The record gives the reactivity of an RNA of 170 nucleotides to DMS and 2A3.
High 2A3 reactivity points to a flexible backbone, as in loops and unpaired stretches.
The DMS profile rests on 29,836 reads.
The 2A3 profile rests on 21,440 reads.
Source: RMDB library 15KLIB, as collected in RNAgym.
High DMS reactivity at an A or C suggests that its Watson-Crick edge is free.

RNA sequence: GGGAACGACUCGAGUAGAGUCGAAAAAAGGAGGAGAGUCCCGCCAGGGGUGAUCCACCCGGAGAUGAGCGGAGAAACCACAUCCAGAGGACCCCUUCGACGAACAGAAGACCCUGGACCGGGAGGGCGAGGUAAGGCUUCGGCCUUACCAAAAGAAACAACAACAACAAC
Reactivity to DMS in 0.01 (KOAc 150mM, MgCl2 10mM, bicine 150mM(pH8.5), 24C), signal-to-noise 9, nucleotides 027 to 129: a080a020g000g000a080g000g020a010g020a130g000u000c020c010c010g060c170c100a090g000g040g020g050u020g010a140u010c060c000a070c120c010c080g010g000a090g060a090u050g010a090g020c000g000g000a090g030a090a090a100c080c050a140c030a170u000c080c070a070g020a060g010g000a040c140c070c090c020u000u000c040g030a090c160g000a130a070c140a080g030a000a060g020a070c070c020c020u000g000g000a070c040c050g060g030g010a030g030g020g020c080g000a070
Reactivity to 2A3 in 0.01 (KOAc 150mM, MgCl2 10mM, bicine 150mM(pH8.5), 24C), signal-to-noise 7, nucleotides 027 to 129: a010a000g050g000a010g000g010a030g010a030g070u060c020c000c000g030c040c010a030g000g000g000g000u050g020a060u020c030c010a020c010c010c000g040g000a060g020a070u110g010a030g050c050g010g010a040g040a110a050a040c060c030a040c020a100u030c020c010a030g040a120g060g020a070c070c000c000c000u040u050c020g090a110c060g030a120a030c030a090g040a040a010g030a060c000c000c000u040g000g000a030c030c020g010g000g010a010g010g020g010c030g010a010